[RMDB]
An RNA of 177 nucleotides, treated with 2A3 and DMS and read out base by base.
DMS adducts were read by reverse transcription with MarathonRT.
For DMS, 2,941 sequencing reads were counted.
2A3 adducts were read by reverse transcription with SuperScript II with manganese.
RNA sequence: GGGAACGACUCGAGUAGAGUCGAAAAAAACCGGCUAAACGACCCCCGCAUCUCAACACCGUCGGUGCCGUACCGGGUCACCGUCCAUGGCGGUAGCAGCAGGCUGCCCAUGCCGGGCAGGCCGGGGCAAGGACGGUAACUUCGGUUACCGUCCUUGAAAAGAAACAACAACAACAAC
Reactivity to 2A3 in 0.01 (KOAc 150mM, MgCl2 10mM, bicine 150mM(pH8.5), 24C), signal-to-noise 3, nucleotides 027 to 126: a000a000a000c030c010g020g000c060u090a160a080a000c060g080a050c000c000c030c010c030g020c040a080u050c080u010c070a040a110c010a070c080c010g070u040c070g000g030u010g020c030c020g080u110a150c010c050g030g010g030u070c050a020c030c000g030u000c060c040a120u190g040g020c010g020g010u010a010g010c040a000g010c020a020g070g050c000u020g030c050c000c010a020u150g120c070c000g000g010g020c020a040g000g070c010c010g010g000g000g010
Reactivity to DMS in 0.01 (KOAc 150mM, MgCl2 10mM, bicine 150mM(pH8.5), 24C), signal-to-noise 3, nucleotides 027 to 126: a060a060a090c040c000g000g000c050u040a010a060a100c150g000a090c050c010c000c060c120g000c070a080u010c060u010c060a130a090c060a090c060c110g000u040c040g000g010u010g010c010c000g010u050a070c190c160g000g000g000u060c030a050c020c010g030u030c150c110a070u020g010g010c030g020g000u030a120g020c090a220g010c120a120g000g000c000u010g020c030c010c000a040u040g000c210c110g000g020g000c060a010g000g000c030c010g000g010g030g000